The record gives the reactivity of an RNA of 177 nucleotides to 2A3 and DMS.
RNA sequence: GGGAACGACUCGAGUAGAGUCGAAAAAUGGAUAACCUGCUCGGUGUGGUUCUGUAUGCCGGAAGCCAUUUCAGCAGCCGUUGCAGUCCUAUCUCUAAUGCUACGCAUUCCGCUCUGUAACUGCAUGGCUACAAGUGUGGUUCGCCACACUUGUAGCAAAAGAAACAACAACAACAAC
Reactivity to 2A3 in 0.01 (KOAc 150mM, MgCl2 10mM, bicine 150mM(pH8.5), 24C), signal-to-noise 5, nucleotides 027 to 126: a010u170g060g020a030u050a080a080c010c010u000g000c010u020c040g020g000u100g040u010g070g050u070u090c000u070g080u080a090u190g090c060c000g020g050a050a070g050c000c000a090u070u140u080c050a080g000c020a010g030c000c010g050u060u070g060c020a030g020u030c010c000u070a100u040c050u000c030u120a080a040u080g000c040u040a040c080g000c040a060u100u020c000c010g030c040u010c040u070g100u070a100a050c000u010g050c050a130u120g110
Reactivity to DMS in 0.01 (KOAc 150mM, MgCl2 10mM, bicine 150mM(pH8.5), 24C), signal-to-noise 1, nucleotides 027 to 126: a010u090g010g040a090u000a120a050c050c040u000g020c040u000c080g020g000u000g010u000g000g000u000u000c040u000g060u010a100u040g000c120c010g000g000a170a020g000c010c010a110u020u000u000c130a070g000c110a010g030c010c030g070u000u000g040c040a010g000u030c020c000u010a050u020c080u010c030u020a040a050u030g050c010u030a090c090g010c020a110u040u000c020c050g000c050u000c080u000g010u020a040a030c060u000g020c060a100u000g040
It was measured as part of the RMDB library OK1LIB. 2A3 is a SHAPE reagent: it acylates the 2'-hydroxyl of flexible nucleotides of all four kinds. For 2A3, 2,944 sequencing reads were counted. The reactions ran in a buffer of 150 mM KOAc, 10 mM MgCl2 and 150 mM bicine (pH 8.5), at 24 C.